[RMDB]
RNA sequence: GGGAACGACUCGAGUAGAGUCGAAAAGAUGUGCUGGAGGCGAUGGGCAUUCCGCAUACCGAGGUGGAUCUCAUCCUGGUGAACGGCGAUCCCGCGGACUUUUCCUACCGGCCGGUCGCCGGCGACCACGUUCGGGACGGUUCGCCGUCCCGAACGUAAAAGAAACAACAACAACAAC
Reactivity to 2A3 in 0.01 (KOAc 150mM, MgCl2 10mM, bicine 150mM(pH8.5), 24C), signal-to-noise 1, nucleotides 027 to 126: g060a000u230g050u080g130c010u070g030g010a010g000g010c100g090a000u130g020g010g000c060a030u110u000c020c000g040c080a090u070a040c010c100g070a110g060g060u110g010g010a080u010c030u000c000a100u000c030c040u080g000g000u140g010a070a020c020g000g000c000g020a000u000c000c000c040g040c030g000g000a050c010u070u180u080u160c000c050u110a100c000c010g000g000c110c010g040g030u000c000g000c000c010g000g000c040g050a040c030c030
The record gives the reactivity of an RNA of 177 nucleotides to 2A3. The data come from the RNA Mapping Database (RMDB), library OK1LIB. For 2A3, 486 sequencing reads were counted. The reactions ran in a buffer of 150 mM KOAc, 10 mM MgCl2 and 150 mM bicine (pH 8.5), at 24 C.